Source: RMDB library VIROID, as collected in RNAgym. This 207-nucleotide RNA was probed chemically with 2A3. For 2A3, 975 sequencing reads were counted. The RNA was probed in 150 mM KOAc, 10 mM MgCl2 and 150 mM bicine (pH 8.5) at 24 C.
[RMDB]
RNA sequence: GGGAACGACUCGAGUAGAGUCGAAAAUCUCUCGCCCUUCACAACCUUCUCGGCAUUGAGAUGACCAUAGGCCAGAAGUGAGUCUUUAAGUAGACACAGCUGAUCUAAGGCGUUGUGUAGGGGCACGGGUUUUCAACCCCCAUGACGGUCGGAGGCUCACAUCAGACUGGUUCGCCAGUCUGAUGUGAAAAGAAACAACAACAACAAC
Reactivity to 2A3 in 0.01 (KOAc 150mM, MgCl2 10mM, bicine 150mM(pH8.5), 24C), signal-to-noise 2, nucleotides 027 to 156: u010c000u000c060u080c160g000c000c000c000u010u020c000a000c000a000a000c010c000u020u020c020u150c240g010g060c060a090u070u220g060a060g060a140u210g020a060c040c000a100u110a010g040g040c020c000a000g000a000a000g040u020g030a000g000u000c010u040u300u080a300a300g300u150a060g060a000c000a010c000a080g040c000u020g000a060u050c010u020a080a020g020g000c020g000u000u010g010u000g060u110a060g000g000g000g000c000a000c010g020g000g020u040u000u070u070c040a060a030c020c010c000c020c070a100u190g050a040c100g020g020u070c050g040g020a070g010g040c040u010